[RMDB]
Record summary: Source: RMDB library OK2TST, as collected in RNAgym. The record gives the reactivity of an RNA of 177 nucleotides to 2A3 and DMS. 2A3 adducts were read by reverse transcription with SuperScript II with manganese. The RNA was probed in 150 mM KOAc, 10 mM MgCl2 and 150 mM bicine (pH 8.5) at 24 C. Values cover nucleotides 27 to 126. For 2A3, 1,524 sequencing reads were counted.
RNA sequence: GGGAACGACUCGAGUAGAGUCGAAAAAGACGUACUAUGCGCUCUAUGAUCUGAUCAUGGCCGGUACAUGUCAUGAUCGUACUAGAUAUAUGCGCGUACCUCGUCACUGUCUAGGUACCACGUGCUCAGCUGGUGAUGCAUUCGUGCAUCACCAGCUAAAAGAAACAACAACAACAAC
Reactivity to 2A3 in 0.01 (KOAc 150mM, MgCl2 10mM, bicine 150mM(pH8.5), 24C), signal-to-noise 1, nucleotides 027 to 126: a000g010a030c010g030u030a020c030u010a020u100g000c020g000c000u020c040u030a060u160g090a110u030c060u110g000a000u000c000a010u000g000g010c040c040g110g050u140a080c060a110u110g000u000c000a000u020g000a000u000c000g010u000a050c050u050a020g050a010u040a000u040a000u200g010c000g000c010g000u000a020c000c010u000c010g010u010c040a050c150u110g060u050c030u020a040g010g020u020a040c020c030a050c130g070u100g010c030u040c010
Reactivity to DMS in 0.01 (KOAc 150mM, MgCl2 10mM, bicine 150mM(pH8.5), 24C), signal-to-noise 2, nucleotides 027 to 126: a130g020a040c020g010u000a070c200u000a100u010g010c020g030c020u000c080u000a010u000g030a060u000c050u010g050a010u020c010a000u000g010g010c000c170g010g000u000a140c180a090u000g010u010c010a010u000g000a010u000c020g020u000a090c230u000a020g000a120u000a080u020a040u030g000c030g010c020g010u000a020c160c000u000c050g000u000c010a170c130u000g010u000c040u010a060g000g000u000a040c010c050a180c110g020u000g010c080u010c100